Record summary: Chemical mapping of a 177-nucleotide RNA with 2A3. The reactions ran in a buffer of 150 mM KOAc, 10 mM MgCl2 and 150 mM bicine (pH 8.5), at 24 C. For 2A3 the reverse transcriptase was SuperScript II with manganese. Source: RMDB library RFM100, as collected in RNAgym.
[RMDB]
RNA sequence: GGGAACGACUCGAGUAGAGUCGAAAAGAAAGAAAGAAAACAGGGUGAGGUAGUAGGUUGUGUGGUUUCAGGGUUGUGAUUUUACCCCAUAAGGAGCUAACUAUACAACCUACUGCCUUCCCUGGAAUACUCGUUGCUCUUUCGAGAGCAACGAGUAAAAAGAAACAACAACAACAAC
Reactivity to 2A3 in 0.01 (KOAc 150mM, MgCl2 10mM, bicine 150mM(pH8.5), 24C), signal-to-noise 1, nucleotides 027 to 126: g100a000a050a000g030a000a090a000g120a000a110a060a030c100a040g000g000g160u240g200a000g000g000u020a000g000u000a000g000g000u000u080g000u020g000u000g000g000u020u020u020c040a040g000g000g010u000u100g040u060g080a170u000u000u160u300a040c030c000c000c000a070u210a300a060g090g030a000g050c130u080a000a000c000u000a000u000a010c000a000a000c000c000u040a000c000u000g000c000c000u000u000c020c000c000u000g000g000a000a000